An RNA of 177 nucleotides, treated with 2A3 and DMS and read out base by base. For DMS the reverse transcriptase was MarathonRT. The data come from the RNA Mapping Database (RMDB), library OK1LIB.

RNA sequence: GGGAACGACUCGAGUAGAGUCGAAAAGACGCUAGAUACGGCACGACGUGUCGAAUUAUCCAAGUUGCAGCGGCUGCCCCGGACGCUAGAUACAGCACGACGUGUCGAAUUAUCCAAGCUGCAGCGGUGAGCUAAUUAUCUUCGGAUAAUUAGCUCAAAAAGAAACAACAACAACAAC
Reactivity to 2A3 in 0.01 (KOAc 150mM, MgCl2 10mM, bicine 150mM(pH8.5), 24C), signal-to-noise 6, nucleotides 027 to 126: g080a000c050g020c040u050a010g000a050u050a080c000g010g000c000a000c010g060a010c040g010u020g020u150c060g040a090a140u190u090a080u130c060c050a100a040g050u090u060g070c020a020g020c010g050g000c020u060g020c000c000c020c000g030g010a010c010g010c010u020a010g010a120u100a060c040a030g010c010a010c030g030a000c010g010u000g010u010c010g010a010a010u110u040a020u060c020c020a090a020g020c030u060g010c020a030g020c020g060g050
Reactivity to DMS in 0.01 (KOAc 150mM, MgCl2 10mM, bicine 150mM(pH8.5), 24C), signal-to-noise 6, nucleotides 027 to 126: g010a090c080g010c020u030a100g010a040u000a040c010g000g000c000a020c000g010a140c040g010u000g000u000c050g010a060a100u040u010a040u010c040c110a070a080g020u020u000g020c190a020g020c010g000g000c020u010g010c020c020c010c020g000g000a050c030g010c040u000a050g010a100u010a040c180a210g020c040a030c010g010a080c000g020u010g000u000c010g000a120a050u020u020a030u000c010c100a060a070g010c030u000g000c070a050g000c050g000g010